[RMDB]
RNA sequence: GGGAACGACUCGAGUAGAGUCGAAAAAGUGUGGGCAAAUUUGGAUGUCACCUGCCACAGAAUCAAACUGCCUUACUUUGAUUGUGCAGACUGAGUGCAGAAAAAUCGACUAACAAAUAGCUACCUGUAGAUCUAGUGACUUCGGUCACUAGAUCUAAAAAGAAACAACAACAACAAC
Reactivity to 2A3 in 0.01 (KOAc 150mM, MgCl2 10mM, bicine 150mM(pH8.5), 24C), signal-to-noise 1, nucleotides 027 to 126: a060g170u200g020u130g020g030g080c070a080a100a210u000u010u040g060g020a020u110g020u020c020a010c020c050u020g000c020c000a020c030a030g090a040a080u160c090a150a020a070c000u020g000c000c060u140u100a070c100u200u180u300g130a220u190u030g110u120g000c000a000g040a080c020u020g000a020g120u300g000c030a000g000a140a140a000a030a000u200c130g000a000c000u050a160a000c090a010a010a000u010a020g010c050u020a060c000c020u060g070
Reactivity to DMS in 0.01 (KOAc 150mM, MgCl2 10mM, bicine 150mM(pH8.5), 24C), signal-to-noise 2, nucleotides 027 to 126: a030g000u000g010u010g050g000g010c030a040a080a080u000u000u010g000g010a190u020g000u010c000a210c250c030u000g000c040c060a300c030a000g080a150a080u010c260a020a060a160c060u000g010c020c040u000u000a030c230u020u010u030g000a050u000u000g070u010g000c070a010g010a110c030u000g030a120g010u000g000c000a080g000a020a070a040a080a290u000c170g000a010c000u000a110a240c030a000a030a010u000a160g000c010u000a040c020c030u000g010
Chemical mapping of a 177-nucleotide RNA with 2A3 and DMS.
For DMS the reverse transcriptase was MarathonRT.
For 2A3, 696 sequencing reads were counted.
Values are in units of 0.01, from 0 to 300, in steps of 10.
Reactivities are given for positions 27 through 126.
It was measured as part of the RMDB library OK2TRN.